Chemical mapping of a 177-nucleotide RNA with 2A3 and DMS.
The 2A3 profile rests on 1,563 reads.
Source: RMDB library M2PK50, as collected in RNAgym.
[RMDB]
RNA sequence: GGGAACGACUCGAGUAGAGUCGAAAACUAUCCGUCUUCGGACGGAUAGAAAGAAUAAAAGAGCCAAUAAUACGGGUAAAAGGCUCAAAAUUCCCGAAUAAAAAACAAAGCAGUUCGCUGCUUUGAAGUUAUACCAAGAGUUCGCUCUUGGUAUAACAAAAGAAACAACAACAACAAC
Reactivity to 2A3 in 0.01 (KOAc 150mM, MgCl2 10mM, bicine 150mM(pH8.5), 24C), signal-to-noise 1, nucleotides 027 to 126: c010u000a010u020c000c000g010u000c010u030u030c080g100g000a040c030g010g000a000u000a000g000a000a030a000g010a030a060u190a030a090a000a070g000a000g000c010c020a050a000u140a060a050u110a070c080g030g010g030u030a050a040a030a000g020g000c020u000c030a030a000a000a090u000u020c020c000c000g000a050a020u170a080a220a010a020a000a010c000a000a000a000g000c000a000g000u020u040c160g050c130u000g000c000u050u000u000g000a010a000
Reactivity to DMS in 0.01 (KOAc 150mM, MgCl2 10mM, bicine 150mM(pH8.5), 24C), signal-to-noise 1, nucleotides 027 to 126: c000u010a010u000c000c010g010u000c000u010u010c100g020g060a010c000g000g010a010u000a010g020a030a120a070g000a130a100u020a120a060a150a170g000a010g020c010c000a020a090u020a130a130u000a190c110g010g040g010u000a050a160a100a110g000g000c000u030c020a030a080a110a100u010u000c000c020c000g020a110a130u010a020a030a070a150a130a120c010a000a010a000g010c000a020g020u000u040c250g040c000u000g020c000u000u000u000g010a020a050